[RMDB]
RNA sequence: GGGAACGACUCGAGUAGAGUCGAAAAGGGGUCAGCUUCAGUGAGCUCUAAGACAGCCUUCUGGAGCUGAAGCCUCCACGGCGUUGAAAGAAGGUCGAGAGCUCGGAAGCUGACGGAGGCACCCAAAGUCAAAAGUUGGUUCGCCAACUUUUGACAACUCUUUAUACUGGUUCGCCAGUAUAAAGAGAAAAGAAACAACAACAACAAC
Reactivity to DMS in 0.01 (KOAc 150mM, MgCl2 10mM, bicine 150mM(pH8.5), 24C), signal-to-noise 2, nucleotides 027 to 156: g020g000g000g000u010c030a050g020c030u050u000c000a300g020u000g000a010g030c010u000c020u000a280a160g000a100c300a050g050c000c000u000u000c010u030g020g010a080g060c000u000g030a010a030g030c050c000u000c010c030a300c020g020g010c040g000u030u010g010a230a240a060g000a070a020g030g020u000c040g040a050g000a030g010c000u000c000g020g000a050a050g010c000u000g000a020c000g000g010a020g040g000c000a040c000c000c010a100a140a110g000u010c000a010a010a010a000g010u000u000g020g020u000u010c300g020c030c000a020a030c000u000u000u000u010g000a030c000a040a070
Reactivity to 2A3 in 0.01 (KOAc 150mM, MgCl2 10mM, bicine 150mM(pH8.5), 24C), signal-to-noise 3, nucleotides 027 to 156: g040g000g030g010u010c010a000g000c000u010u020c020a160g040u050g260a010g000c000u000c010u030a060a020g010a010c020a010g020c000c000u000u000c000u020g040g030a020g010c000u010g010a000a010g000c000c000u000c000c000a020c010g000g010c010g260u300u040g020a010a000a000g010a000a000g010g010u090c040g040a030g010a000g090c010u020c000g010g010a000a000g000c010u000g010a000c000g000g000a000g000g000c000a010c010c010c020a060a080a020g000u000c000a000a000a010a000g000u000u000g020g030u040u130c210g090c100c000a000a000c000u000u000u000u000g010a000c000a000a000